An RNA of 177 nucleotides, treated with 2A3 and DMS and read out base by base. It was measured as part of the RMDB libraries RFM100 and RFMREP. The RNA was probed in 150 mM KOAc, 10 mM MgCl2 and 150 mM bicine (pH 8.5) at 24 C. 2A3 adducts were read by reverse transcription with SuperScript II with manganese.

RNA sequence: GGGAACGACUCGAGUAGAGUCGAAAAUAGGUUGAGGUUGAGCUUGCUCCCUCGCCCAAGAGUUAGCCAAUCUAUAUUCCUGCGCCCUGAACAUAACGGACCUAAUGGACCUGUUGGUCUUGGGCUACUGGGAACCUUAAUUCGUUAAGGUUCCCAGAAAAGAAACAACAACAACAAC
Reactivity to 2A3 in 0.01 (KOAc 150mM, MgCl2 10mM, bicine 150mM(pH8.5), 24C), signal-to-noise 4, nucleotides 027 to 126: u150a020g050g040u010u070g050a010g010g020u010u020g010a020g030c010u000u020g000c000u020c010c000c000u020c080g020c020c010c000a010a000g000a010g000u020u060a000g000c000c000a010a000u000c030u020a100u030a050u170u070c010c010u020g030c000g020c000c000c000u060g110a070a020c040a080u130a050a040c050g030g010a010c010c030u090a110a090u190g050g000a020c000c000u040g050u070u080g020g010u000c030u040u030g010g000g000c010u030a050
Reactivity to DMS in 0.01 (KOAc 150mM, MgCl2 10mM, bicine 150mM(pH8.5), 24C), signal-to-noise 3, nucleotides 027 to 126: u020a050g010g000u000u020g020a010g000g000u000u010g000a220g010c000u010u000g000c020u020c000c020c000u010c300g000c000c020c020a300a040g000a020g020u020u000a040g000c020c010a030a010u000c000u000a060u010a070u010u000c010c010u000g010c080g010c010c000c000u000g010a070a030c140a090u010a030a030c080g000g020a080c010c010u000a070a120u010g020g040a080c030c010u010g010u000u000g010g010u000c020u000u010g000g000g010c010u010a150